[RMDB]
Background: Chemical mapping of a 177-nucleotide RNA with DMS and 2A3. Reactivities are given for positions 27 through 126. The data come from the RNA Mapping Database (RMDB), library OK1LIB.
RNA sequence: GGGAACGACUCGAGUAGAGUCGAAAAGCUCUGAAGGCUUCGCAGGUGGCGAUCGACAAGGGGGCCGAUGCCCUGCUUGCGCAGUUACGGCCGUAAGAACGGCCGCAACAUUUUGCAACAACAAACGCAGUGAUGAGGAGUUCGCUCCUCAUCACUGAAAAGAAACAACAACAACAAC
Reactivity to DMS in 0.01 (KOAc 150mM, MgCl2 10mM, bicine 150mM(pH8.5), 24C), signal-to-noise 2, nucleotides 027 to 126: g010c000u000c020u010g050a160a090g030g000c000u010u000c030g000c060a120g000g010u050g000g020c000g010a100u010c040g000a140c040a130a100g000g010g000g000g090c070c070g000a110u100g020c000c070c050u030g000c070u000u010g020c000g000c290a040g000u000u010a070c010g000g030c000c010g000u010a150a090g000a060a170c000g000g040c000c000g000c000a000a000c000a120u050u000u090u010g000c020a080a120c210a060a060c110a010a050a040c150g000
Reactivity to 2A3 in 0.01 (KOAc 150mM, MgCl2 10mM, bicine 150mM(pH8.5), 24C), signal-to-noise 4, nucleotides 027 to 126: g000c010u000c020u070g130a160a070g110g000c060u080u080c040g020c010a030g020g010u060g030g060c010g050a040u060c030g090a090c020a050a140g050g000g000g050g000c010c040g030a040u190g040c000c000c010u030g050c030u050u020g010c030g000c040a030g000u020u030a020c010g000g000c000c000g040u050a090a010g090a240a020c010g000g000c000c000g000c000a000a090c000a040u080u180u200u170g010c040a070a080c000a030a010c030a080a160a030c130g000
The reactions ran in a buffer of 150 mM KOAc, 10 mM MgCl2 and 150 mM bicine (pH 8.5), at 24 C.